[RMDB]
RNA sequence: GGGAACGACUCGAGUAGAGUCGAAAAGCAAAUACCCACUUACAUCAAUUAUGUUUUACAUCAUGCAAACCGAUUAGCAAAGGAAUAUGAUACAGGUUUAGUGGAGGCUUACCGGCUAAUUGAGGCAUUAAACACAGAAAACGACAAGGACGCAUCACAGUACUAAUCCUUUCGAGGAUUAGUACUGAAAAGAAACAACAACAACAAC
Reactivity to DMS in 0.01 (KOAc 150mM, MgCl2 10mM, bicine 150mM(pH8.5), 24C), signal-to-noise 3, nucleotides 027 to 156: g010c050a070a060a150u000a210c040c020c010a150c120u010u010a060c050a090u020c030a150a170u000u000a080u010g020u010u000u000u020a090c050a080u020c060a070u000g000c060a030a140a300c050c050g000a070u000u000a120g000c030a040a100a100g010g010a120a090u000a060u000g000a140u000a070c070a060g010g010u000u000u000a070g030u000g020g000a070g010g030c030u000u000a070c030c010g040g000c020u000a050a100u000u020g010a080g000g000c000a060u000u000a030a040a020c090a080c040a090g000a040a040a050a050c060g010a070c040a040a060g020g000a090c040g020c040a090u000c020a230
Reactivity to 2A3 in 0.01 (KOAc 150mM, MgCl2 10mM, bicine 150mM(pH8.5), 24C), signal-to-noise 7, nucleotides 027 to 156: g060c030a020a110a060u200a150c010c040c020a020c060u110u140a040c040a090u100c070a090a220u140u120a090u200g070u030u070u050u080a060c060a060u110c020a020u090g040c050a020a060a090c020c020g080a070u050u080a040g020c050a080a010a090g070g040a070a050u120a050u160g090a020u050a120c070a050g090g040u060u130u140a020g020u030g070g020a020g010g000c010u020u040a070c030c010g020g000c020u050a030a040u080u080g030a050g050g000c000a010u050u100a060a100a000c060a000c000a060g110a090a090a030a040c040g030a020c020a040a010g050g000a010c030g020c030a010u070c020a010